[RMDB]
RNA sequence: GGGAACGACUCGAGUAGAGUCGAAAAGAAGUACUUCGGUACUUCAAAAAAGCGUACUACGUCUAAAGCCUAUGAAGUAUGGACCCUACUGUCCCAAAUAGGACAGUAGCCAUAUGGAGGCUGGACGUAUCGCAAAAAACAACCGUUCGCGGUUGAAGGAUCGUUAUUGGUUCGCCAAUAACGAUCCAAAAGAAACAACAACAACAAC
Reactivity to 2A3 in 0.01 (KOAc 150mM, MgCl2 10mM, bicine 150mM(pH8.5), 24C), signal-to-noise 2, nucleotides 027 to 156: g000a000a000g010u020a010c040u100u210c280g160g010u010a010c000u000u050c090a000a000a000a000a000a020g050c070g000u150a060c020u000a000c000g010u020c000u090a300a060a060g030c020c000u210a290u280g000a000a000g020u000a000u010g010g020a040c130c080c060u020a000c020u000g020u000c010c030c050a220a300a300u300a150g000g000a000c000a000g010u000a000g000c000c000a010u000a000u020g000g000a000g010g010c000u000g000g050a000c000g000u020a000u010c000g080c000a000a000a000a260a000a000c010a000a000c000c000g020u030u050c300g000c020g030g010u000u000g040a060a010